[RMDB]
RNA sequence: GGGAACGACUCGAGUAGAGUCGAAAAGAAAUACUCCCAAGAAGUUCCCGGAGGGAUCCAAGAGACGGACGACUUUCCCCCAUUGGUUGGGAAAAGUCCCGGAACCAGGAAAUGGGAAAGAGACGGUUAGGCCUGUAGUUCGCUACAGGCAAAAGAAACAACAACAACAAC
Reactivity to 2A3 in 0.01 (KOAc 150mM, MgCl2 10mM, bicine 150mM(pH8.5), 24C), signal-to-noise 6, nucleotides 027 to 129: g050a010a120a010u100a070c030u000c020c010c010a000a020g080a040a010g030u040u050c020c000c040g030g020a040g010g010g010a020u040c040c020a120a010g050a010g020a070c010g030g010a020c050g000a000c040u000u010u000c000c040c000c000c020a070u090u220g110g030u080u100g020g020g000a030a100a010a000g050u000c000c010c000g010g020a020a030c030c000a000g010g060a030a030a100u140g010g010g040a020a050a010g050a000g010a010c020g020g030u070u070a070g060
Reactivity to DMS in 0.01 (KOAc 150mM, MgCl2 10mM, bicine 150mM(pH8.5), 24C), signal-to-noise 8, nucleotides 027 to 129: g010a110a120a100u040a110c080u020c020c020c030a090a080g020a100a150g000u000u020c010c010c000g010g010a070g010g000g010a060u000c050c070a100a110g000a160g020a110c060g020g000a060c060g000a120c040u000u020u000c030c020c010c070c050a150u050u040g000g020u060u030g000g010g000a050a020a050a080g000u030c010c000c030g000g000a120a080c030c080a040g000g000a080a070a070u040g020g000g030a050a040a030g010a070g020a050c060g000g040u010u010a060g030
An RNA of 170 nucleotides, treated with 2A3 and DMS and read out base by base.